Source information: Chemical mapping of a 177-nucleotide RNA with DMS and 2A3. For 2A3 the reverse transcriptase was SuperScript II with manganese. For DMS the reverse transcriptase was MarathonRT.
[RMDB]
RNA sequence: GGGAACGACUCGAGUAGAGUCGAAAAUACGUACCGUUCGCGGUACGUAACUUACCGAGAACCUUGCUCGGUAUAUCAAGGAAACCCUUGGAAACAAGGGAACAAGAUUACCCUUCGGGGUAAUCAAUAAUACUUGGUUCUUCGGAACCAAGUAUUAAAAAGAAACAACAACAACAAC
Reactivity to DMS in 0.01 (KOAc 150mM, MgCl2 10mM, bicine 150mM(pH8.5), 24C), signal-to-noise 3, nucleotides 027 to 126: u000a020c000g000u000a000c000c000g010u010u030c200g050c000g000g010u010a000c000g000u000a000a030c110u010u010a240c000c000g000a000g010a120a120c010c020u000u000g010c010u000c010g000g010u000a010u010a070u000c080a080a050g010g010a180a140a120c010c000c000u000u010g000g000a170a100a200c000a000a000g000g030g000a060a030c160a110a160g000a010u000u000a000c000c000c000u000u010c160g030g010g000g010u000a000a010u000c010a080a070
Reactivity to 2A3 in 0.01 (KOAc 150mM, MgCl2 10mM, bicine 150mM(pH8.5), 24C), signal-to-noise 1, nucleotides 027 to 126: u030a000c000g010u000a000c010c000g000u000u050c280g000c030g070g020u000a000c010g000u000a000a010c010u020u110a070c000c020g000a020g010a050a080c010c000u030u080g000c000u040c000g020g050u010a010u030a000u010c000a010a040g060g030a120a120a120c000c000c000u000u030g010g020a060a010a020c010a000a000g010g000g020a010a010c030a070a030g000a000u000u000a010c030c020c000u000u060c210g090g000g010g000u010a000a000u000c000a000a000